[RMDB]
RNA sequence: GGGAACGACUCGAGUAGAGUCGAAAAGAUAUGGACGCGCUGAACCCUGGACCCUUCAUGAUUACUUCAGUUCGGAAACGAACUGAAGUAAUCAGAAGCCAGGGAUACGAAUAAGCGUCCUAAGUCACCAAUUCAAUAUCUUCGGAUAUUGAAUUGGAAAAGAAACAACAACAACAAC
Reactivity to DMS in 0.01 (KOAc 150mM, MgCl2 10mM, bicine 150mM(pH8.5), 24C), signal-to-noise 4, nucleotides 027 to 126: g000a060u000a300u000g000g000a000c020g010c010g030c140u020g010a200a150c020c000c000u010g000g010a300c200c300c030u000u000c010a110u000g010a030u010u010a000c000u000u000c000a000g000u000u010c000g000g000a060a070a240c010g010a000a000c000u010g000a000a000g010u000a000a000u000c020a000g000a040a080g000c000c010a000g000g010g020a020u000a020c210g000a110a140u010a110a290g000c010g010u000c000c000u010a020a080g000u000c080a280
Reactivity to 2A3 in 0.01 (KOAc 150mM, MgCl2 10mM, bicine 150mM(pH8.5), 24C), signal-to-noise 2, nucleotides 027 to 126: g010a000u100a040u180g010g000a000c010g060c000g030c280u180g090a160a150c020c010c030u010g000g080a140c160c000c050u050u000c100a300u070g010a000u000u000a010c000u010u000c020a030g020u000u000c010g000g060a060a150a070c000g020a040a000c000u000g000a020a000g010u000a000a010u000c000a000g000a000a000g030c000c000a000g030g030g010a020u040a020c020g030a040a210u300a300a070g000c020g000u030c000c010u000a120a040g030u010c020a020
Structure probing data (DMS and 2A3) for a 177-nucleotide construct. For DMS, 3,071 sequencing reads were counted. Values cover nucleotides 27 to 126. The data come from the RNA Mapping Database (RMDB), library TTRINS. The RNA was probed in 150 mM KOAc, 10 mM MgCl2 and 150 mM bicine (pH 8.5) at 24 C. Values are in units of 0.01, from 0 to 300, in steps of 10. For 2A3 the reverse transcriptase was SuperScript II with manganese.